[RMDB]
RNA sequence: GGGAACGACUCGAGUAGAGUCGAAAACGUUGUCAUCGACAACACCCUAUGCAUUCAUGCUCUGUAAGGGUGCGCCGAAAGGUGAGCAAGCCCGAGUUGCCCAGACCUGAAAUGCAACACUUUAGAGAAAACCCGAAGCAGUUCGCUGCUUCGGGAACAGAAUGCCUUACUUCGGUAAGGCAUUCUGAAAAGAAACAACAACAACAAC
Reactivity to DMS in 0.01 (KOAc 150mM, MgCl2 10mM, bicine 150mM(pH8.5), 24C), signal-to-noise 1, nucleotides 027 to 156: c100g000u000u010g010u000c040a170u010c110g030a100c020a090a020c000a110c020c000c000u070a150u000g030c000a040u030u010c090a050u000g030c000u000c060u000g010u000a150a090g020g060g000u030g010c000g000c020c060g040a070a210a160g010g000u000g000a080g000c020a050a110g020c010c000c020g020a110g020u000u000g000c080c120c030a160g010a160c000c020u000g000a050a080a090u000g000c030a020a100c050a180c030u000u000u000a150g000a230g000a180a050a130a030c000c000c000g010a050a050g060c050a040g020u000u000c300g040c000u000g020c000u000u000c010g000g010g000a000a010
Reactivity to 2A3 in 0.01 (KOAc 150mM, MgCl2 10mM, bicine 150mM(pH8.5), 24C), signal-to-noise 1, nucleotides 027 to 156: c140g000u010u000g020u050c120a300u150c300g000a010c010a020a000c000a030c020c000c020u080a080u090g020c010a000u000u050c000a000u090g090c060u000c030u000g070u070a050a110g020g000g000u030g000c000g000c000c000g090a120a040a020g000g020u030g050a060g090c120a130a060g070c000c000c010g080a070g180u170u280g140c040c010c000a000g000a040c000c010u030g010a000a000a140u000g030c010a020a060c020a030c050u200u160u200a110g000a000g030a110a100a000a000c000c000c000g000a010a000g030c020a000g010u040u240c290g010c150u010g000c000u000u010c000g000g020g000a000a000
The record gives the reactivity of an RNA of 207 nucleotides to DMS and 2A3. The reactions ran in a buffer of 150 mM KOAc, 10 mM MgCl2 and 150 mM bicine (pH 8.5), at 24 C. Source: RMDB library M2RFPK, as collected in RNAgym. For 2A3 the reverse transcriptase was SuperScript II with manganese.